An RNA of 177 nucleotides, treated with 2A3 and DMS and read out base by base. For 2A3, 1,228 sequencing reads were counted. For DMS the reverse transcriptase was MarathonRT. The reactions ran in a buffer of 150 mM KOAc, 10 mM MgCl2 and 150 mM bicine (pH 8.5), at 24 C. 2A3 adducts were read by reverse transcription with SuperScript II with manganese.
[RMDB]
RNA sequence: GGGAACGACUCGAGUAGAGUCGAAAACUCACUUUCGGGUGGGCGAAGCUGAGAACUUAAGCGCCAGUAAACGGCGGUGGUAACUAUAACCAUCCUAAGGUAGCGAAAUUCCUUGUCGGGUAAGUUCACAUCAACAAUGCUUCGGCAUUGUUGAUGUAAAAGAAACAACAACAACAAC
Reactivity to 2A3 in 0.01 (KOAc 150mM, MgCl2 10mM, bicine 150mM(pH8.5), 24C), signal-to-noise 1, nucleotides 027 to 126: c000u010c000a030c010u040u080u100c290g060g000g000u040g010g040g000c030g040a090a000g030c120u070g070a010g020a120a020c000u010u060a120a050g050c030g000c030c020a080g010u240a090a230a020c040g010g000c010g000g040u000g010g020u070a080a030c050u040a100u110a190a030c000c000a010u040c010c010u000a030a040g050g000u030a020g030c010g080a000a020a050u060u050c030c000u000u040g110u120c060g020g020g060u030a010a030g000u000u010c040
Reactivity to DMS in 0.01 (KOAc 150mM, MgCl2 10mM, bicine 150mM(pH8.5), 24C), signal-to-noise 2, nucleotides 027 to 126: c000u000c030a040c040u000u000u000c170g000g020g050u000g010g000g040c020g010a110a130g010c060u000g000a090g010a070a070c000u000u000a050a100g020c020g010c020c020a060g040u010a050a110a100c160g020g010c080g000g010u000g010g000u000a070a080c230u020a140u000a100a050c010c010a010u000c030c020u000a070a050g010g010u010a040g010c060g000a060a080a110u000u000c010c000u000u000g020u000c050g030g020g000u000a040a030g000u000u000c030